[RMDB]
RNA sequence: GGGAACGACUCGAGUAGAGUCGAAAAUGACGCCGCGGCCCGGCGGGUGCCAGAUUAGCGGACGGUGCCCGCGGUUGCAACGGGAUCCCGGGCGCUGCAGCUUGGGAGGCGGCUCUCCCCAGGCGGCGCUGGAUUCAUCAUUCGUGAUGAAUCCAGCAAAAGAAACAACAACAACAAC
Reactivity to 2A3 in 0.01 (KOAc 150mM, MgCl2 10mM, bicine 150mM(pH8.5), 24C), signal-to-noise 3, nucleotides 027 to 126: u100g040a030c050g010c020c010g000c030g080g050c000c000c000g070g020c010g000g000g000u010g000c010c020a160g050a300u160u200a120g140c060g110g070a060c050g000g000u010g000c000c000c010g000c010g010g010u050u150g010c040a030a040c010g020g010g020a010u040c020c000c000g000g040g000c020g000c040u130g020c050a080g010c000u030u050g010g010g010a060g080g020c010g020g030c010u030c010u010c000c010c000c010a040g060g010c020g040g000c030
Reactivity to DMS in 0.01 (KOAc 150mM, MgCl2 10mM, bicine 150mM(pH8.5), 24C), signal-to-noise 2, nucleotides 027 to 126: u020g010a080c110g000c010c020g000c270g010g000c000c010c050g000g030c000g000g000g020u000g000c030c050a040g000a210u010u040a120g030c140g000g030a160c120g000g060u000g010c000c000c010g000c030g030g040u010u020g010c170a130a160c040g010g000g010a230u000c040c000c000g040g030g000c000g020c080u020g000c100a090g000c000u020u000g010g000g010a000g010g030c000g010g000c020u000c010u020c010c000c010c000a060g010g020c050g000g010c100